[RMDB]
RNA sequence: GGGAACGACUCGAGUAGAGUCGAAAAGAAAUUACGUUUCCUUUACUCUUCUCAAACCGGGAUCAAGAGAAGCAAAGCAUCCCUCAUAUCCACGAUGGAGGGUGUCGUGGAGUAUACUGUACCAAAAAGAGCGAACACGGCUUCGGCCGUGUUCGAAGGUCAAGUUAAGGUUCGCCUUAACUUGACCAAAAGAAACAACAACAACAAC
Reactivity to 2A3 in 0.01 (KOAc 150mM, MgCl2 10mM, bicine 150mM(pH8.5), 24C), signal-to-noise 2, nucleotides 027 to 156: g060a010a080a000u200u080a060c060g020u010u010u030c020c000u030u050u030a080c030u060c010u060u010c010u010c050a140a120a050c100c070g020g000g010a030u040c080a200a010g020a030g020a040a030g030c070a030a030a000g040c000a020u020c010c040c000u060c030a100u090a070u070c010c000a000c020g030a020u040g110g050a060g030g060g010u060g000u020c010g000u000g010g000a000g000u000a030u020a030c050u060g130u200a150c030c080a090a050a000a070a030g070a000g080c000g000a000a000c010a000c010g000g000c000u010u030c120g060g000c020c000g000u000g020u000u010c010g000a000a000

Description: An RNA of 207 nucleotides, treated with 2A3 and read out base by base. The reactions ran in a buffer of 150 mM KOAc, 10 mM MgCl2 and 150 mM bicine (pH 8.5), at 24 C.